[RMDB]
RNA sequence: GGGAACGACUCGAGUAGAGUCGAAAAGAUAUGGAGAGAUCCUGUCCGUCACAGCUUUUGACGCGAUCAGGGUCGGAAACGACCCUUAUUCGCGAUAAGCUGUACGGACAGGAUCUCUCCUAAGUCAGUCCUAAAAGAUGUUCGCAUCUUUUAGGACAAAAGAAACAACAACAACAAC
Reactivity to DMS in 0.01 (KOAc 150mM, MgCl2 10mM, bicine 150mM(pH8.5), 24C), signal-to-noise 2, nucleotides 027 to 126: g020a090u000a300u000g000g000a000g010a050g020a020u000c000c010u010g010u000c010c000g010u030c220a020c000a010g040c000u010u010u000u000g010a240c070g020c000g010a010u000c300a040g000g020g000u000c000g010g000a110a160a220c000g000a020c000c000c000u000u000a100u000u000c000g050c010g020a140u000a020a010g000c000u010g020u010a010c020g010g000a000c000a020g000g000a000u010c000u000c000u000c000c010u000a000a090g000u000c060a090